[RMDB]
RNA sequence: GGGAACGACUCGAGUAGAGUCGAAAAGCACGUGGGCUUGGAGAGGUGGGCACCAGUGCAGAUGGACGUCGGUGAAGGAGAAGGCGAGAGAGGCAGGAGGAAGACACCAGCACGGCCAAGGGAGACUCUGGGCGCGUCCCCGUGUUGGGGCCUUGGGCCCCACUAGACCCUUCGGGGUCUAGUGGGGAAAAGAAACAACAACAACAAC
Reactivity to 2A3 in 0.01 (KOAc 150mM, MgCl2 10mM, bicine 150mM(pH8.5), 24C), signal-to-noise 1, nucleotides 027 to 156: g050c030a020c070g070u090g000g060g000c050u050u070g030g030a070g000a000g000g040u090g060g000g020c000a040c020c020a010g040u030g050c000a020g040a060u070g030g010a020c020g020u060c040g030g030u030g050a090a010g040g070a030g020a040a050g030g010c050g000a040g020a000g000a010g000g000c030a020g040g010a020g000g020a030a010g030a020c040a020c000c000a000g040c050a020c090g020g000c040c030a030a050g030g010g000a120g000a020c030u000c080u140g000g060g000c000g000c010g030u070c020c010c000c010g050u040g020u060u090g020g000g000g000c000c020u020u030g020g030g010